[RMDB]
RNA sequence: GGGAACGACUCGAGUAGAGUCGAAAAAGAAAUAACACGGUUUUUGGGAGAAUCGUCACCAAAUCUGGUAAUUGAACGAGGUUGGUCGUGAUUUUCCAGAUAAAUUGUUGACCAACAAUCAGUUCCGAAUGAUCGUAUAUUUCGAUAUACGAUCAUUAAAAGAAACAACAACAACAAC
Reactivity to DMS in 0.01 (KOAc 150mM, MgCl2 10mM, bicine 150mM(pH8.5), 24C), signal-to-noise 9, nucleotides 027 to 126: a060g010a070a060a060u030a080a090c130a070c050g000g000u010u000u010u020u020g010g000g010a080g010a040a050u010c050g010u010c150a130c020c020a040a040a040u010c020u010g010g010u010a050a060u030u030g010a050a030c050g000a040g000g010u000u000g010g000u000c070g010u010g000a030u000u010u010u010c080c080a070g000a040u020a030a030a060u000u000g000u010u020g000a040c040c030a020a020c050a080a070u020c110a110g000u000u000c010c070g010
Reactivity to 2A3 in 0.01 (KOAc 150mM, MgCl2 10mM, bicine 150mM(pH8.5), 24C), signal-to-noise 9, nucleotides 027 to 126: a000g110a010a060a020u170a060a030c050a030c090g020g000u040u020u030u080u130g140g010g010a070g080a090a120u100c040g080u060c070a040c050c020a050a040a060u030c050u030g050g060u150a110a100u120u150g090a050a010c040g020a030g090g060u030u030g010g030u020c030g020u050g070a030u010u020u030u020c030c010a010g020a080u210a020a070a020u040u060g070u070u220g030a030c000c020a010a020c020a010a100u100c070a050g030u040u020c010c030g050
Structure probing data (DMS and 2A3) for a 177-nucleotide construct. For 2A3, 7,834 sequencing reads were counted. The DMS profile rests on 39,094 reads. DMS adducts were read by reverse transcription with MarathonRT. The data come from the RNA Mapping Database (RMDB), library OK1LIB. Conditions: 150 mM KOAc, 10 mM MgCl2 and 150 mM bicine (pH 8.5), 24 C.